An RNA of 177 nucleotides, treated with DMS and 2A3 and read out base by base.
[RMDB]
RNA sequence: GGGAACGACUCGAGUAGAGUCGAAAAUCAUGCGCGAGCACCCAACAUUUACUUGGUUGAAAGAUUUCAUGAAUGAGUAUGCGCCCAGUGUUUUGUCUUACUCUGCUUACUACAAAGACCUUUGCAAUCAAUAAGCCAUAUUCGUAUGGCUUAUUGAAAAAGAAACAACAACAACAAC
Reactivity to DMS in 0.01 (KOAc 150mM, MgCl2 10mM, bicine 150mM(pH8.5), 24C), signal-to-noise 9, nucleotides 027 to 126: u010c090a100u000g020c090g020c130g010a140g020c050a110c040c020c010a080a110c090a080u010u010u010a070c120u000u010g010g010u010u000g010a070a090a120g000a100u000u000u010c060a060u000g010a090a070u010g000a060g010u000a050u000g010c140g010c030c040c030a080g010u010g010u000u000u000u000g010u000c040u000u000a070c050u000c030u000g010c060u000u000a070c100u010a070c110a050a070a110g000a080c050c060u000u000u000g020c140a090a150
Reactivity to 2A3 in 0.01 (KOAc 150mM, MgCl2 10mM, bicine 150mM(pH8.5), 24C), signal-to-noise 6, nucleotides 027 to 126: u060c020a020u090g010c030g000c010g040a030g020c030a040c000c000c000a040a020c020a040u150u170u100a090c070u060u060g090g030u040u070g060a070a080a050g070a120u080u100u110c040a030u080g140a150a050u080g000a020g040u060a020u090g060c010g020c000c010c000a030g020u020g070u080u060u080u090g030u010c010u020u010a040c020u020c000u050g040c020u070u040a060c050u020a040c050a030a110a030g040a060c030c010u040u080u120g070c050a030a070

It was measured as part of the RMDB library OK2TST. 2A3 adducts were read by reverse transcription with SuperScript II with manganese.